[RMDB]
RNA sequence: GGGAACGACUCGAGUAGAGUCGAAAAGAUAUGGAAAUGCACGGGAGAAGUGUUCGGAAACGAACAUACUUCGAAGAACGUGACAUUUCCUAAGUCAAAGUACUCCAGCCUUCGGGCUGGAGUACAACAUAGACAGUAGCUUCGGCUACUGUCUAUGAAAAGAAACAACAACAACAAC
Reactivity to 2A3 in 0.01 (KOAc 150mM, MgCl2 10mM, bicine 150mM(pH8.5), 24C), signal-to-noise 1, nucleotides 027 to 126: g000a000u020a020u110g010g010a000a000a000u030g000c030a000c040g050g000g040a300g010a060a000g020u020g010u010u000c010g000g020a010a000a030c000g010a000a000c000a000u240a100c020u010u000c030g070a180a170g070a090a000c020g000u000g190a040c010a000u000u000u000c000c000u000a020a010g010u030c020a230a020a170g000u000a000c000u030c000c010a010g000c030c000u100u290c300g050g000g010c000u000g000g000a000g010u000a000c000a000a000
Reactivity to DMS in 0.01 (KOAc 150mM, MgCl2 10mM, bicine 150mM(pH8.5), 24C), signal-to-noise 2, nucleotides 027 to 126: g010a010u010a070u010g000g000a000a000a010u000g000c000a010c010g010g000g000a100g000a020a020g020u010g000u010u000c010g020g010a010a020a040c000g020a020a010c010a050u010a090c020u010u000c030g020a120a190g000a140a300c010g000u000g010a180c000a010u000u010u000c010c000u000a020a080g000u000c020a150a100a170g000u010a010c000u000c000c010a010g010c000c000u000u020c300g020g020g020c000u000g010g000a000g010u010a010c020a060a120
An RNA of 177 nucleotides, treated with 2A3 and DMS and read out base by base. For DMS the reverse transcriptase was MarathonRT. 2A3 adducts were read by reverse transcription with SuperScript II with manganese. Values cover nucleotides 27 to 126. The RNA was probed in 150 mM KOAc, 10 mM MgCl2 and 150 mM bicine (pH 8.5) at 24 C.